[RMDB]
RNA sequence: GGGAACGACUCGAGUAGAGUCGAAAAGAUAUGGAUGAUGUGUGCGACGAUCGUCUGGUCGGAAACGACCAGGACGGGAGCACCAUCAUCCUAAGUCAAAGACUGAGGAUGUUCGCAUCCUCAGUCAGUAGCACGGAAAGUUCGCUUUCCGUGCUACAAAAGAAACAACAACAACAAC
Reactivity to 2A3 in 0.01 (KOAc 150mM, MgCl2 10mM, bicine 150mM(pH8.5), 24C), signal-to-noise 1, nucleotides 027 to 126: g000a010u000a000u060g000g010a000u000g010a000u010g230u050g000u000g020c030g090a260c080g010a300u010c020g020u000c000u000g020g000u020c030g010g000a000a000a000c000g010a000c000c000a010g000g060a030c000g000g020g000a020g000c010a000c010c010a000u020c000a000u020c000c000u000a010a000g010u000c010a020a070a140g040a010c000u010g000a000g010g010a020u030g040u080u070c190g010c170a000u000c000c000u000c010a000g000u000c000a010
Reactivity to DMS in 0.01 (KOAc 150mM, MgCl2 10mM, bicine 150mM(pH8.5), 24C), signal-to-noise 1, nucleotides 027 to 126: g010a010u000a000u020g020g000a010u000g010a040u000g010u020g020u000g030c010g020a100c300g030a090u000c000g000u010c010u000g010g050u000c000g030g000a020a010a020c000g050a010c000c000a030g040g010a030c000g010g020g010a020g010c000a000c000c010a000u000c010a000u000c000c000u010a000a030g000u000c010a210a140a120g000a020c000u000g020a010g010g000a010u000g010u000u000c230g090c000a010u000c000c000u010c000a010g000u000c000a010

Chemical mapping of a 177-nucleotide RNA with 2A3 and DMS. For DMS the reverse transcriptase was MarathonRT. The RNA was probed in 150 mM KOAc, 10 mM MgCl2 and 150 mM bicine (pH 8.5) at 24 C. Source: RMDB library TTRDES, as collected in RNAgym.